Overview:
An RNA of 177 nucleotides, treated with DMS and read out base by base. The data come from the RNA Mapping Database (RMDB), library M2PK50. DMS adducts were read by reverse transcription with MarathonRT. The RNA was probed in 150 mM KOAc, 10 mM MgCl2 and 150 mM bicine (pH 8.5) at 24 C.

[RMDB]
RNA sequence: GGGAACGACUCGAGUAGAGUCGAAAAGCCUUUACGUUCGCGUAAAGGCAAAGGAGGCUCGAGUCUGUGUGUGCGUAACGAGCCUCCUCGCACACACAGACAAAACCCUGCUGUUCGCAGCAGGGAACAAUACCGGGUUGUUCGCAACCCGGUAUUGAAAAGAAACAACAACAACAAC
Reactivity to DMS in 0.01 (KOAc 150mM, MgCl2 10mM, bicine 150mM(pH8.5), 24C), signal-to-noise 1, nucleotides 027 to 126: g010c000c000u000u000u000a000c000g010u000u020c200g000c000g020u010a000a020a020g000g010c000a000a030a040g000g000a100g010g000c040u010c050g000a140g000u000c000u010g030u010g010u000g010u000g000c030g020u000a090a080c100g000a060g000c040c030u000c000c020u000c010g010c000a000c000a000c000a000c010a010g010a000c020a090a060a120a120c000c000c010u010g000c010u000g000u000u010c220g020c000a000g000c000a010g010g000g000a020a010